[RMDB]
RNA sequence: GGGAACGACUCGAGUAGAGUCGAAAAGCUGCGUGAAACCUCGCUGUUUUCUUGGCUAACUUUCAGCGAGGUGAGGCAAGGCGGCAAAAAAAAGUUGGGAGCAGCAACGGCAAGCAAAAACAAAGUUACAAGUUGCGAUGGUUCGCCAUCGCAACAAGAUAUUUGCCAACUUCGGUUGGCAAAUAUCAAAAGAAACAACAACAACAAC
Reactivity to 2A3 in 0.01 (KOAc 150mM, MgCl2 10mM, bicine 150mM(pH8.5), 24C), signal-to-noise 1, nucleotides 027 to 156: g010c000u030g020c030g060u130g030a090a020a000c000c000u000c010g000c000u010g010u030u030u040u000c060u080u220g140g000c040u000a050a010c000u020u010u020c010a000g010c000g000a000g010g010u000g000a000g000g020c040a010a040g060g000c020g020g000c000a050a000a000a000a000a000a000a140g080u070u040g090g000g000a080g020c010a000g000c000a050a000c010g040g000c060a050a050g000c000a000a090a090a080a000c050a070a060a010g010u020u050a040c020a080a150g000u010u000g030c000g000a000u000g000g020u020u060c120g060c080c010a000u030c010g040c020a000a000c000a000a000